An RNA of 177 nucleotides, treated with 2A3 and DMS and read out base by base.
For DMS the reverse transcriptase was MarathonRT.
RNA sequence: GGGAACGACUCGAGUAGAGUCGAAAAUUUGGGUAUGGCAAACGCUGCAAAAACUAGAUUCAGUCAAGGACAUUUACUUUGGCUACGUUGGUCCAACCGAAUACGGGCUUCUGAUUCCAUGAAGAGCUUAAUUUUAGUACUUCGGUACUAAAAUUAAAAAAGAAACAACAACAACAAC
Reactivity to 2A3 in 0.01 (KOAc 150mM, MgCl2 10mM, bicine 150mM(pH8.5), 24C), signal-to-noise 9, nucleotides 027 to 126: u050u030u040g070g000g010u150a120u100g020g000c020a020a040a020c030g010c040u070g000c060a030a040a040a080a040c070u080a050g040a170u140u160c070a010g020u010c010a020a020g050g010a080c040a150u130u170u090a090c110u030u020u030g010g000c010u040a020c020g010u010u020g040g010u020c010c010a030a020c010c010g010a020a020u080a070c060g040g000g000c010u110u040c010u080g040a090u140u010c010c010a030u070g050a040a020g020a020g020c000
Reactivity to DMS in 0.01 (KOAc 150mM, MgCl2 10mM, bicine 150mM(pH8.5), 24C), signal-to-noise 7, nucleotides 027 to 126: u020u010u000g000g010g020u010a060u010g000g000c040a090a040a050c050g020c060u000g010c070a040a050a040a040a070c130u010a060g000a080u020u020c100a050g020u020c080a070a070g000g010a080c180a060u020u030u020a040c060u000u000u010g000g010c010u000a080c050g010u000u000g000g010u020c030c040a090a120c040c020g000a050a020u010a120c210g010g000g010c020u020u020c030u000g010a120u010u000c020c010a060u020g010a140a050g000a050g000c070